[RMDB]
RNA sequence: GGGAACGACUCGAGUAGAGUCGAAAAGAAGCUUUGUACUUCGGCUAAGGUGCUGCUACGGUUACGGGACAACACCUUGGCUAGGUACAAUGCUCAAAAAAGCGGCUUACUGUUCGCAGUAAGCCGCCAACAAGAAAUUGUUCGCAAUUUCUUGUUGAAAAGAAACAACAACAACAAC
Reactivity to DMS in 0.01 (KOAc 150mM, MgCl2 10mM, bicine 150mM(pH8.5), 24C), signal-to-noise 4, nucleotides 027 to 126: g010a140a030g010c010u000u000u000g000u000a010c000u000u000c150g040g010c000u000a020a010g000g020u000g020c030u010g010c040u010a090c010g010g010u010u020a120c030g000g000g010a100c010a010a010c000a000c000c010u000u000g000g010c010u000a000g000g010u000a010c010a010a000u000g000c000u010c020a000a050a080a050a070a110g010c000g000g010c000u000u000a010c000u000g000u010u010c220g030c000a010g010u000a010a010g010c010c000g010c000
Reactivity to 2A3 in 0.01 (KOAc 150mM, MgCl2 10mM, bicine 150mM(pH8.5), 24C), signal-to-noise 4, nucleotides 027 to 126: g080a040a010g000c010u030u010u010g000u000a000c010u040u100c160g000g000c000u010a000a010g000g000u010g010c010u000g010c010u100a160c030g030g060u280u140a120c050g030g020g100a040c010a020a000c000a010c000c000u000u000g010g010c000u000a000g000g010u000a000c000a010a010u010g010c000u000c030a100a140a020a010a010a010g000c000g000g000c000u010u010a000c000u010g080u080u110c230g000c100a000g000u000a000a000g000c000c010g020c000
Source: RMDB library RFMREP, as collected in RNAgym.
An RNA of 177 nucleotides, treated with DMS and 2A3 and read out base by base.
The DMS profile rests on 9,539 reads.
The reactions ran in a buffer of 150 mM KOAc, 10 mM MgCl2 and 150 mM bicine (pH 8.5), at 24 C.